[RMDB]
RNA sequence: GGGAACGACUCGAGUAGAGUCGAAAAGAUAUGGAAUACCUUGAGACAUGAAGGUGCUCGGAAACGAGCACCCUUCAACAGCUCAGGUAUUCCUAAGUCAAAACGACCUUUGUUCGCAAAGGUCGAACCAUCUACUAGCCUUCGGGCUAGUAGAUGGAAAAGAAACAACAACAACAAC
Reactivity to DMS in 0.01 (KOAc 150mM, MgCl2 10mM, bicine 150mM(pH8.5), 24C), signal-to-noise 1, nucleotides 027 to 126: g020a020u000a050u010g000g000a000a010u010a000c010c000u000u030g020a050g000a060c100a100u010g020a070a010g040g010u000g010c000u000c020g050g020a020a020a060c010g030a010g010c030a010c140c060c030u000u020c010a050a080c190a170g010c000u000c010a010g010g010u000a000u000u000c000c010u000a000a030g000u000c010a070a050a170a280c020g000a000c000c000u000u010u000g020u010u010c230g060c010a010a000a010g000g000u000c000g030a010a050
Reactivity to 2A3 in 0.01 (KOAc 150mM, MgCl2 10mM, bicine 150mM(pH8.5), 24C), signal-to-noise 2, nucleotides 027 to 126: g020a020u050a000u030g020g000a000a000u020a000c010c060u100u300g020a000g020a010c130a300u120g000a000a010g000g000u000g050c000u000c020g060g000a010a010a010c000g000a020g090c000a000c020c000c000u040u010c000a060a070c070a110g030c000u000c000a000g000g010u000a010u000u000c000c000u010a000a000g000u000c000a020a020a160a210c020g000a010c000c040u000u050u020g090u030u170c300g010c230a020a000a000g000g000u010c010g000a000a030